[RMDB]
RNA sequence: GGGAACGACUCGAGUAGAGUCGAAAAGAUAUGGACACAUCUGGAUGUGUGCAAGCUCGAUAAGUAUGUGUCGGAAACGACAUAAUACUUUUGACGAGCGACCACACAUCCAGAUGUGUCCUAAGUCGUUAAGGGGAGUGUUCGCACUCCCCUUAACAAAAGAAACAACAACAACAAC
Reactivity to DMS in 0.01 (KOAc 150mM, MgCl2 10mM, bicine 150mM(pH8.5), 24C), signal-to-noise 2, nucleotides 027 to 126: g010a060u010a300u020g010g000a000c000a000c000a020u000c000u010g000g010a000u010g000u000g020u020g000c010a050a300g000c000u000c000g000a190u020a010a050g020u000a010u000g010u000g010u000c010g000g040a190a140a300c040g000a000c000a000u010a070a010u000a010c000u000u020u000u000g000a230c120g000a000g000c000g000a300c300c040a000c000a000c000a000u030c010c000a010g020a000u010g010u000g000u000c010c030u000a000a070g010u000c100
An RNA of 177 nucleotides, treated with DMS and read out base by base. The RNA was probed in 150 mM KOAc, 10 mM MgCl2 and 150 mM bicine (pH 8.5) at 24 C. For DMS the reverse transcriptase was MarathonRT. Reactivities are given for positions 27 through 126. The data come from the RNA Mapping Database (RMDB), library TTRINS.